Chemical mapping of a 207-nucleotide RNA with DMS and 2A3. The RNA was probed in 150 mM KOAc, 10 mM MgCl2 and 150 mM bicine (pH 8.5) at 24 C. For 2A3 the reverse transcriptase was SuperScript II with manganese. DMS adducts were read by reverse transcription with MarathonRT.
RNA sequence: GGGAACGACUCGAGUAGAGUCGAAAAGCUCCUGGCUGGCCUACUUGAUUCUUUUAGCAACUUAUUUUACAUUUUUACUGAUUUUUCCAUUGCUACAAGGAAUCAUUAACCAGAAUUUUAAUUGGACUUAAAGAUGGGAAAGAAAGCAGUUUUAUCAAUUAUAUAUGGUGUUCGCACCAUAUAUAAUAAAAGAAACAACAACAACAAC
Reactivity to DMS in 0.01 (KOAc 150mM, MgCl2 10mM, bicine 150mM(pH8.5), 24C), signal-to-noise 1, nucleotides 027 to 156: g030c040u000c010c000u010g040g000c000u000g030g020c090c010u020a100c140u000u010g030a060u000u000c010u000u000u000u020a040g030c020a030a070c020u000u020a080u000u000u000u000a130c050a110u000u000u000u000u000a210c060u020g030a120u000u000u000u000u070c050c030a130u000u020g000c030u000a060c210a060a030g010g000a010a010u000c030a060u000u010a030a030c030c020a130g020a080a080u000u000u000u000a020a220u000u010g020g000a110c030u010u000a050a080a120g030a130u000g010g010g030a040a010a080g020a040a080a050g020c070a020g010u010u000u000u000a140u010c060a080
Reactivity to 2A3 in 0.01 (KOAc 150mM, MgCl2 10mM, bicine 150mM(pH8.5), 24C), signal-to-noise 1, nucleotides 027 to 156: g030c000u020c000c000u000g130g010c000u020g000g040c030c000u090a050c050u020u000g000a000u000u010c000u000u000u000u020a020g020c000a140a000c030u140u090a220u060u240u050u070a090c000a040u160u180u100u170u130a190c090u000g090a220u070u040u090u180u000c030c110a030u000u100g000c000u000a050c070a050a000g020g000a020a020u010c000a000u010u030a020a020c000c000a000g090a020a070u060u160u060u030a110a060u120u130g000g000a000c010u060u030a090a180a060g100a060u100g010g000g080a060a250a000g040a010a130a000g070c090a000g020u060u000u080u190a020u140c070a050